[RMDB]
RNA sequence: GGGAACGACUCGAGUAGAGUCGAAAAGAAAGAAAGAAAGUUCAUUGUUUAUCGGAAACUUUAAACUAUAACCAUUCAAACUUUUCCAGAAGUUAGUUUGAAUAGAAAUUAAUAAGAAACUUCUGAAUGACCUUGGCACCGUUCGCGGUGCCAAGAACAUCCAUUCAUUCUUCGGAAUGAAUGGAUGAAAAGAAACAACAACAACAAC
Reactivity to 2A3 in 0.01 (KOAc 150mM, MgCl2 10mM, bicine 150mM(pH8.5), 24C), signal-to-noise 1, nucleotides 027 to 156: g060a020a030a000g030a070a080a010g040a120a110a040g020u020u030c030a020u030u070g030u070u110u050a120u120c060g000g080a050a080a070c010u080u080u050a080a090a020c000u000a050u060a260a030c010c000a010u000u030c000a010a000a000c000u020u030u000u010c070c000a000g010a010a000g010u000u000a000g000u010u000u010g000a000a010u080a100g060a010a150a040u270u260a040a050u080a140a000g010a110a010a010c010u020u010c000u000g020a030a060u080g000a020c040c030u000u000g020g000c000a000c010c010g050u040u030c120g000c040g060g000u010g020c000c000a000a000g000a000a010

The record gives the reactivity of an RNA of 207 nucleotides to 2A3. The data come from the RNA Mapping Database (RMDB), library M2RFOK.